Conditions: 150 mM KOAc, 10 mM MgCl2 and 150 mM bicine (pH 8.5), 24 C.
The record gives the reactivity of an RNA of 177 nucleotides to 2A3 and DMS.
2A3 adducts were read by reverse transcription with SuperScript II with manganese.
As a SHAPE reagent, 2A3 marks flexible, mostly unpaired nucleotides at the ribose 2'-OH.
[RMDB]
RNA sequence: GGGAACGACUCGAGUAGAGUCGAAAAGAUAUGGAACGAAUCAUGACUGGCUAAGACAGCAGCUCGGAAACGAGCUGUCGAGCCAGGAGUGACUAUUCCUAAGUCAAAAGGCACGUUCGCGUGCCAACAAGCAUAACCAGUUCGCUGGUUAUGCUUGAAAAGAAACAACAACAACAAC
Reactivity to 2A3 in 0.01 (KOAc 150mM, MgCl2 10mM, bicine 150mM(pH8.5), 24C), signal-to-noise 1, nucleotides 027 to 126: g030a010u090a040u190g000g010a030a030c070g050a190a300u010c000a010u060g040a040c000u010g000g020c000u070a120a080g080a060c020a040g040c020a010g000c020u010c000g020g040a030a100a070c030g000a020g000c010u000g000u040c000g010a000g020c010c000a010g000g010a010g010u000g000a000c030u030a040u010u000c000c000u040a180a050g100u050c030a020a030a110a210g010g000c000a010c010g020u070u150c240g030c020g120u010g010c000c000a000a000
Reactivity to DMS in 0.01 (KOAc 150mM, MgCl2 10mM, bicine 150mM(pH8.5), 24C), signal-to-noise 5, nucleotides 027 to 126: g020a040u000a300u000g000g000a010a010c070g000a070a120u000c010a020u000g010a300c000u000g000g010c000u020a200a100g020a090c300a120g000c050a010g000c020u000c000g030g000a060a030a120c010g010a010g010c000u000g010u000c010g000a030g010c010c000a010g020g000a200g010u000g010a000c060u000a240u000u000c000c010u000a050a130g000u000c040a040a040a090a080g000g010c010a010c010g010u010u010c210g010c000g040u000g000c000c000a010a070

For 2A3, 7,567 sequencing reads were counted.